Conditions: 150 mM KOAc, 10 mM MgCl2 and 150 mM bicine (pH 8.5), 24 C. This 177-nucleotide RNA was probed chemically with DMS and 2A3. Source: RMDB libraries RFM100 and RFMREP, as collected in RNAgym. For 2A3, 988 sequencing reads were counted.
RNA sequence: GGGAACGACUCGAGUAGAGUCGAAAAGGGCCUGGUCUUAUACACAACGGUAGUCCAGUGGUAAUUUCAGUAUAAGAAGGAAAUCACCAUAUUGCAGAUCCGAGGUGAACGCUAUGUUUUAACUAUCAAAUCAGUCGGUAUUCGUACCGACUGAUUUAAAAGAAACAACAACAACAAC
Reactivity to DMS in 0.01 (KOAc 150mM, MgCl2 10mM, bicine 150mM(pH8.5), 24C), signal-to-noise 3, nucleotides 027 to 126: g030g000g000c010c000u000g010g000u000c030u000u040a040u010a080c030a070c080a100a090c080g010g000u010a060g040u020c050c060a090g030u020g000g000u010a030a010u000u000u000c000a150g000u030a130u020a080a050g040a080a090g000g010a010a010a010u000c030a040c000c030a080u000a110u010u000g000c010a060g000a080u010c020c040g000a050g020g000u000g000a020a050c130g010c050u000a050u020g000u010u000u020u000a060a100c110u010a070u010c140
Reactivity to 2A3 in 0.01 (KOAc 150mM, MgCl2 10mM, bicine 150mM(pH8.5), 24C), signal-to-noise 2, nucleotides 027 to 126: g040g000g010c060c010u030g000g000u000c020u070u060a130u040a040c040a000c000a000a160c050g010g010u020a030g080u000c050c030a010g020u000g030g010u000a020a020u020u000u020c030a050g050u060a140u110a300a090g080a060a070g130g010a040a030a020u070c010a070c080c020a000u150a120u030u130g030c070a010g010a120u010c020c020g000a040g040g020u040g030a040a000c030g030c080u100a050u140g000u000u060u000u000a090a050c020u000a020u130c040